[RMDB]
RNA sequence: GGGAACGACUCGAGUAGAGUCGAAAACACAUUCUAUUCGUAGAAUGUGGAACGUAGAGAGAUCGACAGCGUCGCAGCUAUGUCGAACGAGGAAGAGCGCCCAGGGAUCGGGCUUCGGCCCGAUCAAUCCUUCGUAUCCCUUCGGGGAUACGAAGGAAAAAGAAACAACAACAACAAC
Reactivity to DMS in 0.01 (KOAc 150mM, MgCl2 10mM, bicine 150mM(pH8.5), 24C), signal-to-noise 1, nucleotides 027 to 126: c010a020c000a030u000u000c000u010a010u000u030c170g020u000a000g000a030a010u040g030u000g000g000a060a100c130g000u000a070g010a130g050a220g000a070u020c000g010a030c040a060g010c060g020u030c160g000c190a220g000c010u000a130u000g010u000c010g030a030a090c080g030a130g040g000a090a050g000a090g000c080g010c000c030c010a060g030g020g020a030u020c030g010g010g000c000u000u010c150g030g010c000c030c000g010a000u000c000a060a080
The record gives the reactivity of an RNA of 177 nucleotides to DMS.
It was measured as part of the RMDB library M2PK50.
The reactions ran in a buffer of 150 mM KOAc, 10 mM MgCl2 and 150 mM bicine (pH 8.5), at 24 C.
DMS adducts were read by reverse transcription with MarathonRT.